[RMDB]
RNA sequence: GGGAACGACUCGAGUAGAGUCGAAAAAGGCAAUAACAUUUGAUGAAGAGGAUCGCCGUGAGUACCUCUCUUUGCAUAAGCGUAAGAAUGAACGGCGCGUGAAGGCGUUUGUCGAAGCCAAGCAAAAGUGGUUUUAAUGAUUCGUCAUUAAAACCACAAAAGAAACAACAACAACAAC
Reactivity to DMS in 0.01 (KOAc 150mM, MgCl2 10mM, bicine 150mM(pH8.5), 24C), signal-to-noise 4, nucleotides 027 to 126: a060g010g010c060a030a070u000a070a140c120a100u000u000u020g000a100u010g010a080a100g010a050g030g000a150u000c070g000c030c030g030u010g000a160g040u010a080c070c020u000c040u000c020u010u000u000g010c050a150u000a080a100g020c050g010u020a070a110g000a110a080u000g020a090a050c040g000g000c020g000c120g020u000g010a090a160g010g020c020g000u010u010u000g030u020c050g020a080a110g010c040c030a060a130g020c110a040a050a100a100
Reactivity to 2A3 in 0.01 (KOAc 150mM, MgCl2 10mM, bicine 150mM(pH8.5), 24C), signal-to-noise 4, nucleotides 027 to 126: a010g080g020c040a090a030u150a180a060c040a150u110u090u210g100a090u080g040a080a080g030a010g050g020a050u060c050g000c030c030g020u070g050a030g090u050a050c010c010u020c010u000c020u030u050u050g040c050a070u050a250a080g010c020g070u040a040a040g030a100a090u080g040a050a030c020g030g000c020g000c030g040u080g120a100a020g130g000c010g000u000u050u110g030u010c010g030a030a000g000c010c000a030a020g060c000a030a040a070a030
The data come from the RNA Mapping Database (RMDB), library OK2TST. This 177-nucleotide RNA was probed chemically with DMS and 2A3. The DMS profile rests on 2,857 reads. Values are in units of 0.01, from 0 to 300, in steps of 10. DMS adducts were read by reverse transcription with MarathonRT.